RNA sequence: GGGAACGACUCGAGUAGAGUCGAAAACAGACGCCAGCAGAUGCUGGGGUAUGCCUCGCUGGCAGAAGUCCCGGCGGAACAACUGGACGGCAAAAGCGAGCGCAUUCAGCACUAUUUCAACGCGGUUUACUGCUGGGCACGCGCCAUGCUCAACGAACUGACCUUAGUAUUUCGAUACUAAGGUCAGAAAAGAAACAACAACAACAAC
Reactivity to 2A3 in 0.01 (KOAc 150mM, MgCl2 10mM, bicine 150mM(pH8.5), 24C), signal-to-noise 3, nucleotides 027 to 156: c020a020g110a060c040g060c030c020a010g000c060a010g100a130u130g010c000u020g050g000g030g060u110a010u080g020c030c000u040c020g050c040u080g020g000c000a020g060a080a010g040u050c020c040c010g020g020c020g030g060a080a030c040a020a000c060u030g000g040a080c000g020g000c030a040a050a050a030g040c020g040a030g020c050g000c030a020u070u110c010a010g030c010a010c050u100a150u040u160u090c140a140a070c100g010c070g040g070u010u050u100a060c030u000g020c020u010g010g020g010c050a040c040g040c010g000c020c010a090u220g000c020u050c100a040a110c060g010a070a040
Reactivity to DMS in 0.01 (KOAc 150mM, MgCl2 10mM, bicine 150mM(pH8.5), 24C), signal-to-noise 1, nucleotides 027 to 156: c030a140g000a140c080g000c030c010a020g030c010a120g010a120u020g000c020u010g000g000g030g020u010a070u010g040c020c020u000c170g040c040u000g010g270c040a110g040a100a140g000u000c020c010c030g040g060c040g040g010a050a130c110a070a040c010u010g000g000a090c030g010g000c060a060a060a220a060g010c080g000a060g060c050g000c040a100u010u000c010a060g000c000a080c060u010a160u010u010u010c070a080a120c110g020c110g000g050u000u020u010a090c030u030g010c000u000g000g010g000c060a040c060g000c040g040c020c060a140u000g000c010u000c030a040a110c000g010a150a260